[RMDB]
RNA sequence: GGGAACGACUCGAGUAGAGUCGAAAAACUUCCUGCCAAACUGCUGUUAGUAAGCUUCUAGAUACAUGUUUUGAAGCUACAGAAGCAACAUUUAACUUCUUGUUAGAUUUGGCAGGAUUGUUCAGAAAUAGCUGUAUGUUCGCAUACAGCAAAAGAAACAACAACAACAAC
Reactivity to DMS in 0.01 (KOAc 150mM, MgCl2 10mM, bicine 150mM(pH8.5), 24C), signal-to-noise 9, nucleotides 027 to 129: a090c030u010u000c000c000u000g030c030c000a010a020a050c190u010g010c000u000g020u060u010a020g000u020a050a090g030c020u010u010c010u030a050g000a060u000a160c290a130u030g020u000u010u000u010g000a030a010g010c010u020a010c000a060g020a160a030g000c020a030a100c300a090u030u030u020a030a030c020u030u070c150u040u010g000u000u000a010g020a110u000u010u010g000g020c020a040g000g030a010u010u010g010u000u000c100a090g010a090a090a050u030a150
Reactivity to 2A3 in 0.01 (KOAc 150mM, MgCl2 10mM, bicine 150mM(pH8.5), 24C), signal-to-noise 9, nucleotides 027 to 129: a000c000u010u000c000c000u010g000c010c010a020a020a020c050u040g020c000u030g050u260u090a050g010u040a130a070g000c000u000u000c020u050a030g010a080u110a190c170a150u240g100u050u080u020u070g020a010a000g000c000u000a020c010a020g070a040a000g030c030a030a050c040a070u110u130u080a050a050c030u070u080c050u130u190g040u050u110a080g020a280u040u000u010g000g000c000a010g010g000a000u010u070g010u000u040c030a000g110a110a140a050u220a050